[RMDB]
RNA sequence: GGGAACGACUCGAGUAGAGUCGAAAACUAUAUCGCCAUUCAAACCGGCAACGGCUACACGACGAACGACAAUUUCGGAUCGACCGCCGCAGCGGUCGGCAUACCGCUCAUUGCUGGAAUCGUCAUAACCGUAUAUCCCUUUCGAGGGAUAUACGGUAAAAGAAACAACAACAACAAC
Reactivity to DMS in 0.01 (KOAc 150mM, MgCl2 10mM, bicine 150mM(pH8.5), 24C), signal-to-noise 3, nucleotides 027 to 126: c050u000a080u010a110u000c080g020c010c030a060u020u000c180a070a100a110c230c030g000g020c100a080a100c100g000g000c030u000a070c140a060c080g000a050c010g020a030a040c020g010a010c020a030a030u010u020u000c000g000g010a160u000c010g000a020c020c010g030c000c280g010c280a120g020c000g020g010u010c000g000g020c240a070u000a090c000c030g020c250u000c110a070u010u000g020c010u000g000g000a120a060u000c040g000u000c000a110u000a060
Reactivity to 2A3 in 0.01 (KOAc 150mM, MgCl2 10mM, bicine 150mM(pH8.5), 24C), signal-to-noise 3, nucleotides 027 to 126: c020u020a040u040a060u300c090g020c030c040a030u080u100c080a090a080a100c030c030g020g000c040a030a030c030g040g000c030u130a040c070a030c140g050a010c000g010a230a030c010g040a020c040a030a030u020u030u030c000g020g000a020u010c010g020a010c000c010g050c000c080g140c070a020g020c010g000g000u000c000g000g000c000a040u110a090c000c000g030c040u020c020a010u020u040g000c010u020g030g060a090a120u010c000g010u000c000a010u070a100